[RMDB]
RNA sequence: GGGAACGACUCGAGUAGAGUCGAAAAGAUAUGGACCUCGGGGGUGAUACAGACAUGCUGGAGUACGUGUCGGAAACGACAUGAAACAGCAACAGCUGUAUCACCUCUCUAGCGUGGGUCCUAAGUCCGCUAAGAUUAGGUUCGCCUAAUCUUAGCGAAAAGAAACAACAACAACAAC
Reactivity to DMS in 0.01 (KOAc 150mM, MgCl2 10mM, bicine 150mM(pH8.5), 24C), signal-to-noise 3, nucleotides 027 to 126: g010a140u000a300u000g010g020a010c000c010u000c060g000g010g010g000g030u000g000a010u010a000c000a030g000a060c090a220u000g030c000u020g000g010a080g020u010a100c290g000u000g020u000c000g020g000a120a080a180c010g010a000c000a000u000g000a190a110a240c000a000g000c030a030a060c300a200g010c010u000g000u000a000u000c000a020c000c000u000c000u000c090u020a090g010c280g030u020g010g020g000u000c000c000u010a030a140g000u000c060

Source information:
The record gives the reactivity of an RNA of 177 nucleotides to DMS. The reactions ran in a buffer of 150 mM KOAc, 10 mM MgCl2 and 150 mM bicine (pH 8.5), at 24 C. DMS adducts were read by reverse transcription with MarathonRT. Source: RMDB library TTRINS, as collected in RNAgym. For DMS, 1,815 sequencing reads were counted.